[RMDB]
RNA sequence: GGGAACGACUCGAGUAGAGUCGAAAACAUGGUUCGCCAUGCUUCACGCGUACUACCUCGACUACAUCGAUCUAGUCUCCCCACCAUGACUCCCAAAUAGGAGUCAUGAGGACUAGGGAGUAGGUCGAGGUAUCGCUCGACAGUCCUUCGGGACUAAUUAUGUAACGGGGUUCGCCCCGUUACAUAAAAAAGAAACAACAACAACAAC
Reactivity to DMS in 0.01 (KOAc 150mM, MgCl2 10mM, bicine 150mM(pH8.5), 24C), signal-to-noise 1, nucleotides 027 to 156: c000a010u000g020g090u010u000c300g000c000c000a030u000g010c050u000u020c010a230c050g000c050g050u000a060c070u000a020c010c000u000c000g040a030c000u000a020c040a300u000c070g070a090u030c000u010a000g010u000c010u000c300c060c030c060a300c280c020a020u000g010a030c000u000c020c000c030a030a150a240u020a040g020g010a060g010u000c000a000u000g000a140g040g000a020c020u000a060g000g030g020a070g000u000a060g010g020u020c000g000a030g010g000u000a000u000c020g030c010u000c040g010a110c150a090g000u000c000c040u010u000c220g050g020g000a020c000u000a000a000
Reactivity to 2A3 in 0.01 (KOAc 150mM, MgCl2 10mM, bicine 150mM(pH8.5), 24C), signal-to-noise 2, nucleotides 027 to 156: c000a000u020g000g060u080u050c250g010c040c000a030u040g040c090u140u150c150a100c070g000c030g040u190a180c040u000a000c000c000u020c000g020a000c000u120a040c000a180u140c030g130a050u020c100u000a000g000u000c050u040c040c020c010c000a030c000c000a000u000g010a000c020u040c000c030c040a250a000a080u240a180g000g000a000g000u000c000a000u000g010a020g020g000a000c030u030a000g000g040g010a060g010u080a060g000g210u020c010g000a000g030g000u030a030u050c000g020c010u000c080g110a210c120a050g000u000c010c000u080u200c300g050g040g030a000c010u070a040a180
Structure probing data (DMS and 2A3) for a 207-nucleotide construct. Reactivities are given for positions 27 through 156. For 2A3, 795 sequencing reads were counted. Source: RMDB library RNAMAK, as collected in RNAgym.